[RMDB]
RNA sequence: GGGAACGACUCGAGUAGAGUCGAAAAAGGAAUUCUGUGACAUGCUUAGAUUGAUUGACUUCAACAAGCAAGCCCUGCACACCUUCAAAGGGGAAGUCAAAGCAGGAUUACAGCUUAUCACCAAAGCAACAGUGGGAAACUUCGGUUUCCCACUGUUAAAAGAAACAACAACAACAAC
Reactivity to 2A3 in 0.01 (KOAc 150mM, MgCl2 10mM, bicine 150mM(pH8.5), 24C), signal-to-noise 4, nucleotides 027 to 126: a000g110g060a040a020u100u010c030u080g050u080g040a030c040a120u050g020c010u090u040a120g060a300u170u000g010a020u040u050g050a090c240u030u000c050a020a020c020a030a020g040c040a040a060g050c000c000c000u020g010c040a050c030a080c050c030u270u230c130a150a100a050g000g040g020g000a070a010g080u070c000a030a040a080g000c020a010g000g030a050u020u090a030c050a010g020c020u080u050a090u100c040a060c090c000a130a060a000g010c000
Reactivity to DMS in 0.01 (KOAc 150mM, MgCl2 10mM, bicine 150mM(pH8.5), 24C), signal-to-noise 2, nucleotides 027 to 126: a040g000g000a020a000u010u000c000u000g010u040g000a100c060a150u000g000c040u000u000a040g000a190u000u000g010a030u000u000g010a190c190u000u000c000a000a000c080a160a070g000c020a030a140g040c110c030c020u010g000c240a080c170a080c150c030u000u010c100a060a080a100g000g000g020g000a010a130g000u030c090a080a060a130g030c010a010g000g000a110u000u000a060c020a020g000c100u000u000a090u010c020a100c040c000a080a050a040g000c160